[RMDB]
RNA sequence: GGGAACGACUCGAGUAGAGUCGAAAAGUUGCCCGAGAAGAGAUCACACAGAUGAGACACAAGGAGCGAUGUCUCAUCACUUGGUUUUCGACAAGUGACGAGUCGUUCCCAAAAUGGCUCCAAUGAAAGAAGUGGUAUGUUUCGACAUACCACUUCUAAAAGAAACAACAACAACAAC
Reactivity to DMS in 0.01 (KOAc 150mM, MgCl2 10mM, bicine 150mM(pH8.5), 24C), signal-to-noise 1, nucleotides 027 to 126: g020u000u000g090c220c000c000g050a040g010a220a140g020a100g000a140u010c150a080c100a120c100a150g000a020u000g010a060g000a020c000a000c040a020a110g000g000a030g020c000g060a150u000g010u000c000u000c000a070u000c000a030c030u000u010g020g000u000u000u000u000c030g000a010c010a060a090g000u020g010a080c020g020a000g000u000c000g050u000u000c000c000c000a010a010a020a030u010g000g000c000u000c010c040a230a130u000g000a050a080
Description:
Structure probing data (DMS) for a 177-nucleotide construct. The RNA was probed in 150 mM KOAc, 10 mM MgCl2 and 150 mM bicine (pH 8.5) at 24 C. The DMS profile rests on 736 reads.